[RMDB]
RNA sequence: GGGAACGACUCGAGUAGAGUCGAAAAGGUGCUAACGUAGCUCCCCCUGGUCUCUUGUAUCUGUGCUACAGUAAAUCUGAUCUGUACCUCUGCAUUUGGGGAGUCCCUUUCUCUCCUACAUGUAUUCGUAAUCUGAAUGGUUCGCCAUUCAGAUUACAAAAGAAACAACAACAACAAC
Reactivity to 2A3 in 0.01 (KOAc 150mM, MgCl2 10mM, bicine 150mM(pH8.5), 24C), signal-to-noise 9, nucleotides 027 to 126: g050g010u050g020c020u070a140a050c090g150u110a050g010c000u030c000c000c000c000c010u020g030g020u020c010u010c000u060u070g040u120a120u050c030u030g070u060g060c040u030a040c020a040g050u120a050a130a120u080c060u070g040a050u020c010u040g050u040a050c000c010u040c020u040g020c010a080u030u060u110g010g000g000g020a010g030u050c010c010c000u020u120u020c020u000c010u000c000c010u040a050c030a120u080g040u100a130u030u110c050
Reactivity to DMS in 0.01 (KOAc 150mM, MgCl2 10mM, bicine 150mM(pH8.5), 24C), signal-to-noise 4, nucleotides 027 to 126: g010g010u020g010c040u000a080a110c130g010u030a060g000c040u000c020c020c010c040c040u010g010g010u000c030u010c060u010u000g010u010a050u000c040u010g000u000g000c060u010a070c030a050g010u000a060a080a070u030c080u000g010a090u020c050u010g000u010a050c040c020u000c050u010g000c050a070u000u020u000g010g010g010g000a050g010u010c100c030c040u010u020u000c010u000c030u000c010c020u000a040c160a040u000g020u000a080u020u000c130